[RMDB]
RNA sequence: GGGAACGACUCGAGUAGAGUCGAAAAGAUAUGGAGCACGUGCCAGAUGAUGUCGGAAACGACAUUCAUCGGUAAUUCGUGUCUCCUAAGUCAAACGAGUCUAGCUCCUUCGGGAGCUAGACUCGAACAAUCUGAUCUACUUCGGUAGAUCAGAUUGAAAAGAAACAACAACAACAAC
Reactivity to 2A3 in 0.01 (KOAc 150mM, MgCl2 10mM, bicine 150mM(pH8.5), 24C), signal-to-noise 3, nucleotides 027 to 126: g030a000u050a060u180g000g000a010g020c000a000c010g000u040g030c030c050a040g010a010u000g010a000u010g000u020c000g030g030a110a030a090c030g010a010c010a010u180u160c010a010u010c000g000g040u030a060a140u140u110c020g000u010g100u060c030u000c010c000u010a120a010g070u020c020a050a060a120c040g000a000g010u040c000u010a010g000c020u000c000c000u030u090c280g090g000g000a000g000c010u000a000g000a000c000u000c000g010a000a000
Reactivity to DMS in 0.01 (KOAc 150mM, MgCl2 10mM, bicine 150mM(pH8.5), 24C), signal-to-noise 4, nucleotides 027 to 126: g000a030u010a300u010g000g000a000g020c000a000c000g020u000g000c010c000a220g040a010u000g010a020u000g000u000c000g010g000a080a080a170c000g010a010c000a010u010u010c000a000u010c000g000g010u000a020a120u010u000c010g020u000g000u010c000u010c000c000u000a020a100g000u000c040a060a130a250c030g000a020g020u000c000u000a000g000c000u000c000c010u000u010c200g020g020g000a010g010c000u000a000g000a000c000u000c000g000a040a140
Notes:
Chemical mapping of a 177-nucleotide RNA with 2A3 and DMS. The data come from the RNA Mapping Database (RMDB), library TTRDEL. The reactions ran in a buffer of 150 mM KOAc, 10 mM MgCl2 and 150 mM bicine (pH 8.5), at 24 C. Reactivities are given for positions 27 through 126.